[RMDB]
RNA sequence: GGGAACGACUCGAGUAGAGUCGAAAACAUAAUUUUGCUAGUCUCAUAAUGCGAGUAGGUCAAAGGACUUGGUGCCUGUAUGGUGUGCACUUUGCCCAAACUUUAAUGCAUUUAGAUGGGGCAAAUGCACUGCGACCAGUUUCGACUGGUCGCAGUGAAAAGAAACAACAACAACAAC
Reactivity to DMS in 0.01 (KOAc 150mM, MgCl2 10mM, bicine 150mM(pH8.5), 24C), signal-to-noise 1, nucleotides 027 to 126: c050a010u000a010a070u040u010u010u000g020c000u000a300g030u000c000u000c300a000u010a020a000u000g030c100g000a080g000u000a060g000g000u000c060a000a020a000g010g000a050c030u020u030g000g000u000g000c000c000u000g000u060a040u060g030g030u010g050u080g010c080a020c000u000u000u000g010c000c000c000a090a050a180c090u000u020u030a050a080u020g060c060a150u010u020u030a030g000a100u010g000g010g030g010c000a000a000a020u000g000
Reactivity to 2A3 in 0.01 (KOAc 150mM, MgCl2 10mM, bicine 150mM(pH8.5), 24C), signal-to-noise 2, nucleotides 027 to 126: c060a090u080a110a220u160u040u110u060g010c000u000a000g030u000c020u000c030a130u070a200a040u030g010c010g000a020g090u040a010g100g000u050c010a000a000a080g040g000a110c070u040u120g200g030u090g040c000c000u110g090u260a160u300g140g090u120g040u050g030c030a050c010u000u000u000g030c000c000c000a000a120a010c070u100u020u090a180a040u220g000c020a080u010u010u090a090g020a080u090g300g000g000g000c000a000a000a010u030g000